The record gives the reactivity of an RNA of 207 nucleotides to DMS and 2A3. The 2A3 profile rests on 1,860 reads.
RNA sequence: GGGAACGACUCGAGUAGAGUCGAAAAUCCCGCAUUCGUGCGGGAAAAAAGCCGCUAUGGUGAAAUUGGUAGACACGCUGCUCUUAGGAAGCAGUGCUAGAGCAUCUCGGUUCGAGUCCGAGUAGCGGCACCAAAAAAAGCGAUAUUCGUAUCGCAAAGACCAGUAAAAUUUCGAUUUUACUGGUCUAAAAGAAACAACAACAACAAC
Reactivity to DMS in 0.01 (KOAc 150mM, MgCl2 10mM, bicine 150mM(pH8.5), 24C), signal-to-noise 2, nucleotides 027 to 156: u010c050c010c020g030c020a030u000u000c240g020u000g070c030g040g000g000a030a020a020a120a120a080g050c010c010g050c030u030a040u000g010g010u000g000a010a070a000u000u030g010g010u000a070g010a300c040a050c010g020c000u000g000c010u000c050u000u000a130g010g010a050a020g010c000a000g000u000g020c020u020a020g000a180g070c000a040u000c010u010c000g000g030u000u000c070g000a300g000u000c010c020g000a010g000u010a010g030c000g000g080c010a110c030c010a010a000a120a120a080a140a140g000c000g020a010u000a030u000u020c300g090u000a020u000c030g000c000a050a090
Reactivity to 2A3 in 0.01 (KOAc 150mM, MgCl2 10mM, bicine 150mM(pH8.5), 24C), signal-to-noise 2, nucleotides 027 to 156: u010c030c000c000g030c020a050u060u080c130g050u030g030c020g000g000g000a150a020a000a000a040a000g000c010c000g030c000u000a000u010g000g030u020g030a030a060a070u280u300g060g080u110a000g010a030c010a010c020g000c000u000g030c000u000c020u100u170a150g100g060a110a030g050c000a000g010u010g020c010u080a140g000a010g150c010a010u030c000u000c000g000g000u010u010c010g000a010g000u000c000c010g000a010g000u000a000g000c020g000g000c000a000c000c010a000a040a010a010a000a010a020g000c000g010a000u010a010u050u090c130g010u020a000u000c000g000c000a020a080
Record summary
For DMS the reverse transcriptase was MarathonRT. The RNA was probed in 150 mM KOAc, 10 mM MgCl2 and 150 mM bicine (pH 8.5) at 24 C.